Conditions: 150 mM KOAc, 10 mM MgCl2 and 150 mM bicine (pH 8.5), 24 C. The record gives the reactivity of an RNA of 177 nucleotides to DMS and 2A3. It was measured as part of the RMDB library OK1LIB.

RNA sequence: GGGAACGACUCGAGUAGAGUCGAAAACAGCGGCAACCUCGCCGGCGCGCACCGCAGCUCUCGCACCGUGCGCGUACCCGUCUGGGUGGACCGCGGCGGAGCUGCAGGUACACACGACGAAGCAGAAAUCCAGCCAGGUAUUCGUACCUGGCUGGAUAAAAGAAACAACAACAACAAC
Reactivity to DMS in 0.01 (KOAc 150mM, MgCl2 10mM, bicine 150mM(pH8.5), 24C), signal-to-noise 1, nucleotides 027 to 126: c240a090g000c000g010g020c040a080a090c050c000u000c010g000c080c000g000g000c100g000c050g000c100a010c060c120g000c000a010g000c000u100c100u010c100g030c040a080c050c290g000u000g000c080g020c080g060u000a000c030c010c000g000u090c190u020g050g000g000u000g060g000a150c080c000g050c010g000g020c060g000g080a060g040c000u000g060c010a040g000g020u060a030c080a160c000a080c000g020a030c010g000a080a060g030c150a030g030a080a080
Reactivity to 2A3 in 0.01 (KOAc 150mM, MgCl2 10mM, bicine 150mM(pH8.5), 24C), signal-to-noise 2, nucleotides 027 to 126: c060a020g030c000g030g000c000a050a080c060c000u050c050g010c000c000g010g000c050g000c010g010c020a010c000c000g000c020a000g000c000u000c030u090c050g030c030a160c060c000g000u020g000c150g000c030g030u010a000c000c000c000g170u110c210u300g010g000g000u020g030g190a070c000c000g000c000g000g020c010g030g000a020g000c000u000g000c000a030g010g000u010a030c050a020c000a010c040g040a000c000g000a020a000g070c180a020g070a090a090
Reactivities are given for positions 27 through 126.